This 177-nucleotide RNA was probed chemically with 2A3 and DMS. The RNA was probed in 150 mM KOAc, 10 mM MgCl2 and 150 mM bicine (pH 8.5) at 24 C.

RNA sequence: GGGAACGACUCGAGUAGAGUCGAAAACGGGCUCGAUUUCAUGGGCUGCUGCGCUUUCGCCGCACUGGCCGACGAGGCACAACGAUGUCGGUGCCGCGGCAUCGACCUGCGUCUGGUGAGCCACCAGCCGUCACUACUGCUUCGGCAGUAGUGACGGAAAAGAAACAACAACAACAAC
Reactivity to 2A3 in 0.01 (KOAc 150mM, MgCl2 10mM, bicine 150mM(pH8.5), 24C), signal-to-noise 1, nucleotides 027 to 126: c060g060g000g040c050u090c070g150a150u000u140u130c150a160u250g050g040g000c020u020g010c000u000g000c010g000c070u120u210u150c070g030c040c000g050c020a030c080u060g050g050c020c000g020a050c080g000a000g000g040c070a030c020a090a040c020g080a030u070g020u050c000g000g090u040g100c010c080g040c060g070g030c000a000u040c010g090a090c030c030u160g000c050g040u080c020u030g090g000u110g030a000g020c020c000a030c000c000a020g080
Reactivity to DMS in 0.01 (KOAc 150mM, MgCl2 10mM, bicine 150mM(pH8.5), 24C), signal-to-noise 1, nucleotides 027 to 126: c100g010g010g010c010u000c000g010a160u000u000u010c070a160u020g000g010g000c020u000g000c220u000g000c030g000c120u000u000u000c130g000c110c060g030c030a040c000u000g030g080c000c000g000a020c030g010a100g030g000c000a030c180a090a120c090g000a040u000g000u020c010g080g020u010g010c100c110g000c110g000g000c020a020u000c020g020a090c090c070u000g010c060g000u000c050u000g040g010u000g010a070g050c020c000a130c070c000a110g020
Reactivities are given for positions 27 through 126.